[RMDB]
The record gives the reactivity of an RNA of 207 nucleotides to DMS and 2A3. For DMS the reverse transcriptase was MarathonRT.
RNA sequence: GGGAACGACUCGAGUAGAGUCGAAAAGGAAGAUCGUUCGCGAUCUUCCGGCGUUUCCUAAGUCUGCAACAGCGUGAUGCUUUGAUCGUAUCGGAAACGAUACGGGAGCGCACGACAUGCAGAUAUGGAUGUAGGCACAUCGCUUCGGCGAUGUGAACUCUGAUAAACGGUUCGCCGUUUAUCAGAGAAAAGAAACAACAACAACAAC
Reactivity to DMS in 0.01 (KOAc 150mM, MgCl2 10mM, bicine 150mM(pH8.5), 24C), signal-to-noise 2, nucleotides 027 to 156: g020g020a060a020g010a000u010c000g040u000u000c250g060c030g020a000u000c010u000u000c020c020g020g000c110g010u010u000u000c000c020u020a120a290g010u000c000u000g010c000a060a070c090a140g020c010g000u040g020a090u010g040c000u010u000u010g000a160u010c020g020u030a020u010c000g020g000a220a150a300c010g030a030u000a000c000g000g010g020a000g030c010g000c010a040c000g000a050c060a300u000g000c000a000g000a010u000a140u000g000g000a110u000g000u010a110g010g000c020a020c000a010u000c000g030c000u000u000c300g030g020c000g000a020u000g010u000g000a030a120
Reactivity to 2A3 in 0.01 (KOAc 150mM, MgCl2 10mM, bicine 150mM(pH8.5), 24C), signal-to-noise 2, nucleotides 027 to 156: g000g000a000a010g010a000u010c020g030u100u110c300g030c030g160a000u000c000u000u000c000c000g000g000c030g040u040u120u000c020c000u050a090a070g010u000c000u000g020c020a050a030c030a270g050c040g000u040g060a300u170g030c050u100u140u080g110a160u230c010g000u010a000u010c000g040g030a120a070a000c010g000a000u000a000c000g000g020g020a010g000c020g010c000a000c000g060a090c020a070u030g000c000a000g010a000u030a060u080g040g030a070u140g100u290a100g130g000c040a000c000a000u040c010g000c000u070u040c260g170g000c000g010a000u000g000u000g000a010a020